The data come from the RNA Mapping Database (RMDB), library RFM100. An RNA of 177 nucleotides, treated with 2A3 and read out base by base. For 2A3 the reverse transcriptase was SuperScript II with manganese. For 2A3, 867 sequencing reads were counted.
RNA sequence: GGGAACGACUCGAGUAGAGUCGAAAAAGCUAUCGAUACGUCGAUAGCAACAGGCAGAGCCUUGCGUGUGUUCUUAUUGGUAGUGUGGCUGGUAAUCUAUCAUAAGACACACGCGGCUCUCUCUGAAUACACAAGCGCUGUUCGCAGCGCUUGUGUAAAAAGAAACAACAACAACAAC
Reactivity to 2A3 in 0.01 (KOAc 150mM, MgCl2 10mM, bicine 150mM(pH8.5), 24C), signal-to-noise 2, nucleotides 027 to 126: a000g000c000u000a010u000c000g000a020u030a050c200g100u090c000g040a000u000a000g000c000a000a030c010a000g000g050c020a010g000a010g000c030c030u080u300g010c000g000u020g000u000g100u140u060c010u010u030a040u030u300g040g000u010a020g000u040g120u140g220g100c090u060g110g000u040a130a100u060c000u000a000u000c000a010u000a010a000g000a000c030a000c020a000c000g010c010g000g000c000u010c000u000c000u000c000u000g040a050a000